[RMDB]
RNA sequence: GGGAACGACUCGAGUAGAGUCGAAAAGACAAAUGCAGCAUAUUAGGCUAAGGAGGAAAGGGACGGUAGCUCCUGGUGUCAGUUCAUACGGUGUGAUGCAUCUGCGUCGUGCACACAUGCACCCAAAGUAUAAGAACAGGUUCGCCUGUUCUUAUACAAAAGAAACAACAACAACAAC
Reactivity to DMS in 0.01 (KOAc 150mM, MgCl2 10mM, bicine 150mM(pH8.5), 24C), signal-to-noise 9, nucleotides 027 to 126: g010a090c070a050a070a060u010g010c040a040g010c040a050u000a070u000u010a090g010g010c040u010a080a090g000g010a060g000g010a060a080a090g010g010g000a060c070g010g010u010a080g010c040u000c040c030u000g010g020u010g010u000c050a070g010u000u010c090a070u010a090c120g000g000u000g020u000g000a070u000g010c020a020u000c090u010g010c100g010u000c100g010u000g000c020a030c070a050c080a030u000g010c060a100c000c010c030a050a060a130
Reactivity to 2A3 in 0.01 (KOAc 150mM, MgCl2 10mM, bicine 150mM(pH8.5), 24C), signal-to-noise 9, nucleotides 027 to 126: g050a010c030a020a090a020u120g010c010a020g010c010a040u060a080u200u160a100g060g000c020u040a030a060g020g010a020g020g050a120a040a050g040g010g020a020c050g030g000u030a020g030c020u020c010c020u020g020g020u050g020u030c050a040g030u070u080c040a030u080a150c100g030g000u020g010u030g030a120u030g000c000a020u020c030u100g040c030g070u130c030g010u050g000c000a010c000a000c000a040u070g030c020a050c000c010c000a020a090a020